The record gives the reactivity of an RNA of 177 nucleotides to DMS and 2A3. It was measured as part of the RMDB library TTRDEL. 2A3 adducts were read by reverse transcription with SuperScript II with manganese. In probing experiments dimethyl sulfate is read out at A N1 and C N3, which are open when not base-paired. The RNA was probed in 150 mM KOAc, 10 mM MgCl2 and 150 mM bicine (pH 8.5) at 24 C. Reactivities are given for positions 27 through 126.
RNA sequence: GGGAACGACUCGAGUAGAGUCGAAAAGAUAUGGACUUCCCAUGCAUCGAAGAACUCGGAAACGAGGGAGAUGUGCAUGGGAGAGUCCUAAGUCAAACUGUAUUAUAAGUUCGCUUAUAAUACAGAAGUAACAUACGGACUUCGGUCCGUAUGUUACAAAAGAAACAACAACAACAAC
Reactivity to DMS in 0.01 (KOAc 150mM, MgCl2 10mM, bicine 150mM(pH8.5), 24C), signal-to-noise 2, nucleotides 027 to 126: g000a130u000a300u000g010g020a040c000u000u000c000c000c000a040u000g000c000a000u000c110g020a080a090g010a300a290c000u000c000g000g000a080a080a140c020g030a010g010g000g010a290g010a080u000g030u000g030c000a030u000g000g000g000a010g000a010g010u000c000c010u000a030a020g010u000c040a060a110a160c000u000g000u000a000u000u000a000u010a010a010g000u000u000c300g020c000u000u000a000u000a010a000u000a000c000a000g000a100a050
Reactivity to 2A3 in 0.01 (KOAc 150mM, MgCl2 10mM, bicine 150mM(pH8.5), 24C), signal-to-noise 2, nucleotides 027 to 126: g010a000u040a080u140g000g000a000c000u000u000c030c000c000a010u010g000c000a020u050c100g170a300a130g010a120a050c000u000c010g040g010a110a030a040c030g000a010g010g050g020a110g010a050u180g010u040g030c010a000u010g000g000g000a060g050a000g000u000c000c010u030a110a020g040u000c030a090a030a090c020u000g010u010a010u000u010a010u000a010a000g020u030u100c170g010c140u000u020a000u000a000a010u000a000c000a010g000a010a020